Structure probing data (2A3 and DMS) for a 177-nucleotide construct. DMS adducts were read by reverse transcription with MarathonRT. Reactivities are rounded to 0.1 and cut off at 0 and 3.
RNA sequence: GGGAACGACUCGAGUAGAGUCGAAAACGCGGAGUACGAUCGAGGGUACAGCAUAAUCUCAACUUUUGUUGAGCCACAAUUUUAAUCCUAAUUGGAGAAGGCCAAAGGACUGUACUACUUUUGUAGGGUAAGUUGGUGUUUUCGAACACCAACUUACAAAAGAAACAACAACAACAAC
Reactivity to 2A3 in 0.01 (KOAc 150mM, MgCl2 10mM, bicine 150mM(pH8.5), 24C), signal-to-noise 6, nucleotides 027 to 126: c060g000c020g020g040a020g000u070a050c030g020a140u110c020g050a050g030g000g000u010a020c010a000g020c040a050u110a180a120u090c000u000c030a010a020c040u040u080u240u300g010u010u010g000a000g000c000c020a130c030a020a010u050u060u100u200a080a020u030c010c000u090a130a180u100u120g040g000a130g050a170a100g090g050c050c040a060a010a000g030g010a000c000u010g020u030a020c010u080a110c000u040u100u060u110g070u070a030g010g080
Reactivity to DMS in 0.01 (KOAc 150mM, MgCl2 10mM, bicine 150mM(pH8.5), 24C), signal-to-noise 2, nucleotides 027 to 126: c130g070c080g000g000a070g020u000a030c070g050a060u000c140g000a080g000g010g010u000a020c050a030g020c070a090u010a100a110u040c000u000c010a000a030c060u020u010u030u020g000u030u010g000a060g020c150c060a050c140a030a040u010u010u010u000a070a190u000c030c020u000a020a110u000u050g000g020a160g000a070a070g000g000c020c020a000a070a080g000g000a080c040u000g000u000a070c000u010a080c020u030u000u020u010g000u000a040g000g030